[RMDB]
RNA sequence: GGGAACGACUCGAGUAGAGUCGAAAAGGGGCAGUCCAGGAGCUGUCUGAAACACAGCAACGAGUGCAAGUAGCGCUCGCGCGUGCUAAUGCGAGAACGCUCGCACAUUUCUACUUUUUGCGUCGAUGGCGAGGGAGAAACAUCCGGCUGCAUGCGCACAUAAUAGCCUGUUCGCAGGCUAUUAUGUAAAAGAAACAACAACAACAAC
Reactivity to 2A3 in 0.01 (KOAc 150mM, MgCl2 10mM, bicine 150mM(pH8.5), 24C), signal-to-noise 7, nucleotides 027 to 156: g040g010g010g000c030a020g040u060c100c080a070g090g040a030g010c010u010g020u020c030u030g060a030a040a010c060a000c010a020g040c020a060a100c060g030a010g010u010g000c020a120a080g080u100a040g100c010g000c020u010c000g010c010g000c010g020u070g040c060u140a100a060u130g010c030g010a020g020a170a060c060g040c100u010c010g070c010a050c010a070u110u140u040c030u050a140c050u070u110u070u220u190g090c050g030u060c050g080a080u080g060g010c030g020a050g050g000g010a050g050a010a130a020c040a070u040c030c010g010g000c020u010g000c020a030u080g020c040g000c020
Reactivity to DMS in 0.01 (KOAc 150mM, MgCl2 10mM, bicine 150mM(pH8.5), 24C), signal-to-noise 3, nucleotides 027 to 156: g030g020g030g020c020a050g030u010c040c030a170g050g000a260g020c010u000g020u000c040u010g010a130a080a060c080a040c110a140g020c010a130a040c080g000a070g030u000g000c020a110a190g010u000a170g030c000g020c000u010c000g010c020g030c060g070u000g020c090u010a100a070u010g000c000g000a060g010a080a090c160g010c000u000c020g020c020a030c030a070u000u000u000c040u000a040c050u000u000u000u000u000g040c040g020u000c070g000a130u000g010g020c040g000a100g020g000g010a100g010a150a050a060c070a090u000c000c020g030g000c020u000g030c020a090u000g000c000g100c070

Chemical mapping of a 207-nucleotide RNA with 2A3 and DMS.
2A3 adducts were read by reverse transcription with SuperScript II with manganese.
In probing experiments dimethyl sulfate is read out at A N1 and C N3, which are open when not base-paired.
For DMS the reverse transcriptase was MarathonRT.
For DMS, 7,224 sequencing reads were counted.
The reactions ran in a buffer of 150 mM KOAc, 10 mM MgCl2 and 150 mM bicine (pH 8.5), at 24 C.
Values are in units of 0.01, from 0 to 300, in steps of 10.
Reactivities are given for positions 27 through 156.